Chemical mapping of a 177-nucleotide RNA with 2A3 and DMS. For DMS, 8,220 sequencing reads were counted. Values cover nucleotides 27 to 126. Reactivities are rounded to 0.1 and cut off at 0 and 3. 2A3 adducts were read by reverse transcription with SuperScript II with manganese. Source: RMDB library VIROID, as collected in RNAgym. Conditions: 150 mM KOAc, 10 mM MgCl2 and 150 mM bicine (pH 8.5), 24 C.
RNA sequence: GGGAACGACUCGAGUAGAGUCGAAAAGGUGCCCUAUCCGAAGCACUGCAGUUUCGGUAGAAAGGCUAAGCACCUCGCAAUGAGGUAAGGUGGGACUUUUCCUUCUGGAACCAAGCGGUUGGUUCCGCCAAAAUGGUAAGUUCGCUUACCAUUUUGGAAAAGAAACAACAACAACAAC
Reactivity to 2A3 in 0.01 (KOAc 150mM, MgCl2 10mM, bicine 150mM(pH8.5), 24C), signal-to-noise 6, nucleotides 027 to 126: g040g010u070g030c020c000c000u020a030u030c010c010g000a010a000g010c040a060c250u300g070c100a110g010u010u010u000c000g000g000u000a000g020a040a050a000g040g000c020u030a040a050g060c030a030c010c010u000c000g040c100a220a300u300g010a030g010g040u040a030a040g070g020u140g010g000g040a030c020u080u050u050u080c020c000u060u100c110u130g000g010a000a010c000c000a020a020g130c080g130g020u020u020g000g010u020u000c000c000g000
Reactivity to DMS in 0.01 (KOAc 150mM, MgCl2 10mM, bicine 150mM(pH8.5), 24C), signal-to-noise 6, nucleotides 027 to 126: g010g020u010g000c010c010c010u000a100u000c010c010g000a030a020g010c000a100c210u010g020c240a140g000u000u000u000c000g000g020u000a020g010a070a090a110g000g010c060u010a070a170g020c120a060c000c000u000c010g010c180a120a090u010g010a040g010g000u010a060a070g000g010u000g000g000g010a120c070u000u000u000u000c020c030u000u010c140u010g000g010a020a010c010c010a020a050g020c190g000g000u000u000g010g000u000u000c000c000g020